An RNA of 177 nucleotides, treated with 2A3 and read out base by base. For 2A3, 384 sequencing reads were counted. The reactions ran in a buffer of 150 mM KOAc, 10 mM MgCl2 and 150 mM bicine (pH 8.5), at 24 C.
[RMDB]
RNA sequence: GGGAACGACUCGAGUAGAGUCGAAAAAUGCCGCAUUCAGUGACGGUUACUCUAGUGGGCUACUGUCCAUCUAGCGUUGACAUCUACAUACUAUAUAGUAAUACCAAUACUCAAGACUACGAAACGGCGCGUGAGUGCUCUUCGGAGCACUCACGCGAAAAGAAACAACAACAACAAC
Reactivity to 2A3 in 0.01 (KOAc 150mM, MgCl2 10mM, bicine 150mM(pH8.5), 24C), signal-to-noise 1, nucleotides 027 to 126: a000u040g090c000c000g120c070a010u160u080c200a010g050u000g010a190c050g000g000u000u000a000c000u000c000u000a000g000u000g000g000g000c110u000a000c090u210g060u050c000c000a070u000c000u000a080g000c000g000u000u010g000a000c000a130u000c030u150a000c010a120u050a080c090u110a040u110a110u000a250g000u030a150a000u000a130c000c000a040a040u000a030c080u000c000a010a000g080a110c000u010a010c200g000a080a210a000c000g120g040